[RMDB]
RNA sequence: GGGAACGACUCGAGUAGAGUCGAAAAGAUAUGGACUAUAUUGACAUGCACGUGUGGUCGGAAACGACCACGUGCAACAGCAAUGAUAGUCCUAAGUCAAACCAAAUAAUGGUUCGCCAUUAUUUGGGAAUAGAGUAGCGUUCGCGCUACUCUAUUCAAAAGAAACAACAACAACAAC
Reactivity to DMS in 0.01 (KOAc 150mM, MgCl2 10mM, bicine 150mM(pH8.5), 24C), signal-to-noise 7, nucleotides 027 to 126: g010a010u000a160u010g000g000a010c000u000a000u000a030u000u000g000a060c090a250u020g020c010a010c000g020u000g020u010g020g020u000c000g010g010a020a030a080c000g010a020c000c000a010c000g010u000g010c000a040a070c300a150g000c000a010a010u000g010a020u000a010g000u000c000c000u000a010a110g000u000c010a150a140a300c000c010a010a000a010u000a000a010u000g000g010u000u010c300g030c010c000a010u000u000a000u000u000u000g010g000
Reactivity to 2A3 in 0.01 (KOAc 150mM, MgCl2 10mM, bicine 150mM(pH8.5), 24C), signal-to-noise 6, nucleotides 027 to 126: g010a010u020a020u070g000g000a000c000u000a000u010a020u060u030g070a150c150a220u300g030c010a010c020g080u190g100u200g170g100u000c000g000g030a030a030a000c010g000a000c000c000a000c010g010u010g000c000a040a020c070a020g030c000a010a010u160g140a040u130a000g000u000c010c010u000a020a010g020u010c030a090a080a140c010c000a000a010a010u010a000a000u010g050g070u050u090c300g060c130c000a010u000u010a010u010u000u010g040g000